[RMDB]
RNA sequence: GGGAACGACUCGAGUAGAGUCGAAAAUUAAUGGAGGAACCUCAGGGGGACGGUCCUUCGUAGGAAACUCUAUCCUGGCUCUGCGCGCGCUUUAAGGAAAUGGCUUCCCUCCAGGACCUCGAGGGAUGCAGCUUUUGCGCGGAUGACGGUGGGGUGCCACCUUCGAAUGUUUCGACAUUCGAAGGUGAAAAGAAACAACAACAACAAC
Reactivity to 2A3 in 0.01 (KOAc 150mM, MgCl2 10mM, bicine 150mM(pH8.5), 24C), signal-to-noise 2, nucleotides 027 to 156: u150u090a090a060u090g000g020a000g010g020a090a200c000c030u020c060a100g030g000g000g000g010a010c050g060g040u030c000c000u030u000c020g000u050a010g020g170a140a240a020c060u030c000u040a100u120c000c030u030g080g010c010u000c010u060g020c030g000c000g010c010g020c060u130u100u110a090a050g100g030a090a110a090u140g100g000c000u010u000c010c010c010u030c020c010a060g080g160a160c020c080u050c060g000a000g010g000g050a020u040g010c060a040g060c000u000u040u080u210g020c000g000c010g040g000a060u080g030a010c040g060g020u000g000g000g000g000u010g000c000